This 177-nucleotide RNA was probed chemically with 2A3 and DMS. Reactivities are rounded to 0.1 and cut off at 0 and 3. The reactions ran in a buffer of 150 mM KOAc, 10 mM MgCl2 and 150 mM bicine (pH 8.5), at 24 C. The 2A3 profile rests on 1,982 reads.
RNA sequence: GGGAACGACUCGAGUAGAGUCGAAAAGGAAAUGUCGAAGGAUGAUGUCCACCACGCCGUGCUGUCACGUUCUCGGUACCCUCGAUUUCCGUCUCUUCUUGCAUGCGUAUCCAACCGCCUCGCGGCUAGAUAGCAGAUGGUUCGCCAUCUGCUAUCUAAAAGAAACAACAACAACAAC
Reactivity to 2A3 in 0.01 (KOAc 150mM, MgCl2 10mM, bicine 150mM(pH8.5), 24C), signal-to-noise 2, nucleotides 027 to 126: g100g010a070a060a020u110g030u090c050g020a100a020g110g020a040u120g010a030u140g090u030c050c010a020c000c010a060c060g090c050c050g070u050g000c040u100g040u090c020a020c040g050u030u040c060u010c000g030g040u040a080c000c000c000u010c030g090a120u000u050u000c060c000g100u050c020u020c000u100u020c000u030u080g040c040a050u100g050c000g020u040a100u000c020c000a010a040c040c030g040c010c020u070c090g040c040g000g020c020u030
Reactivity to DMS in 0.01 (KOAc 150mM, MgCl2 10mM, bicine 150mM(pH8.5), 24C), signal-to-noise 2, nucleotides 027 to 126: g000g020a020a110a040u000g020u010c030g000a110a120g030g010a090u000g000a090u000g000u000c070c010a070c010c020a090c110g020c120c080g000u000g000c090u000g000u010c020a070c040g030u000u000c040u000c040g000g030u000a070c070c010c000u000c080g000a110u000u000u010c010c020g030u000c000u000c040u000u000c030u000u010g010c070a020u000g000c020g000u010a100u000c010c080a170a070c120c020g010c020c060u000c170g000c070g000g000c090u010